[RMDB]
RNA sequence: GGGAACGACUCGAGUAGAGUCGAAAAUCAUGCGUAGAUUGUCGCAUAAAAUAAAUGAGUCUUUAGAAAGGAAGAAAGAUAUCAACAUAUCUGUCUGUUUAUCAACAAACGAAAAGAAAAUGUUGAGCGUUAACUGUGUCUUCGGACACAGUUAACGAAAAGAAACAACAACAACAAC
Reactivity to 2A3 in 0.01 (KOAc 150mM, MgCl2 10mM, bicine 150mM(pH8.5), 24C), signal-to-noise 1, nucleotides 027 to 126: u030c000a010u060g010c010g020u040a050g060a290u070u270g100u240c000g000c020a000u100a010a070a000a010u130a000a090a090u120g040a000g080u030c030u030u110u050a160g090a300a110a080g140g050a110a050g000a020a160a000g040a000u100a050u050c000a030a000c000a030u050a010u020c000u020g140u050c020u020g020u020u030u030a130u120c100a050a040c040a100a030a000c030g110a110a040a000a040g000a000a100a000a060u060g000u000u010g010a010g030
Reactivity to DMS in 0.01 (KOAc 150mM, MgCl2 10mM, bicine 150mM(pH8.5), 24C), signal-to-noise 1, nucleotides 027 to 126: u020c060a040u000g000c020g020u000a220g000a200u020u010g020u020c050g000c020a020u000a070a100a030a080u020a050a160a100u000g000a110g030u000c010u000u000u000a050g000a170a130a160g020g020a060a100g020a040a060a040g010a040u000a060u010c020a010a000c030a060u000a010u000c000u000g000u000c090u070g000u010u000u000a100u060c300a050a040c300a030a030a030c000g000a020a060a050a030g000a050a100a020a050u000g000u020u000g030a030g000